[RMDB]
RNA sequence: GGGAACGACUCGAGUAGAGUCGAAAACUUAAGACUAUAUCAUCAUUUUCAUUUUCAUUUUCAUCUAACUCAUCGCGAUGGCCAAGCUGCUUUAUAUUCGGUGAAGGACCAUCAAUUUCCUUACUCCCGCAGGCAUUACCUUCGGGUAAUGCCUGCGAAAAGAAACAACAACAACAAC
Reactivity to 2A3 in 0.01 (KOAc 150mM, MgCl2 10mM, bicine 150mM(pH8.5), 24C), signal-to-noise 2, nucleotides 027 to 126: c090u100u140a030a010g060a000c070u140a100u080a100u210c060a050u050c000a080u080u120u000u050c000a000u000u020u070u080c050a020u000u130u250u140c000a020u050c000u080a090a080c020u000c030a000u040c000g040c020g180a030u040g010g000c000c000a030a010g000c050u000g090c160u000u290u000a120u040a130u210u000c000g020g000u150g110a110a040g110g000a030c000c000a000u010c020a020a090u020u030u000c010c020u000u060a120c000u040c060c000